[RMDB]
RNA sequence: GGGAACGACUCGAGUAGAGUCGAAAAUGAUCGCCUGCCAUCCCCGGAUGCUCGACCCGUCGAACCCGAGCCCCUCCUCGAAGGUCUUUUCGGAGAGCUCGCGGGCAGGGAUGGAGAAGUGCUGCCACACCUGCUGCGAAUUCGUUCGCAGCAGGUGAAAAGAAACAACAACAACAAC
Reactivity to DMS in 0.01 (KOAc 150mM, MgCl2 10mM, bicine 150mM(pH8.5), 24C), signal-to-noise 1, nucleotides 027 to 126: u000g000a120u010c090g010c030c010u000g030c020c010a050u010c000c010c000c180g030g000a190u000g020c040u010c030g000a170c120c080c190g030u010c050g030a040a140c030c050c030g030a050g000c090c030c020c080u000c030c030u010c100g010a010a050g010g010u000c180u010u010u000u000c050g030g010a060g050a290g000c030u000c010g030c090g020g010g000c010a060g020g020g000a010u000g000g010a060g000a070a060g010u010g060c040u000g010c040c030a180
This 177-nucleotide RNA was probed chemically with DMS. For DMS, 770 sequencing reads were counted.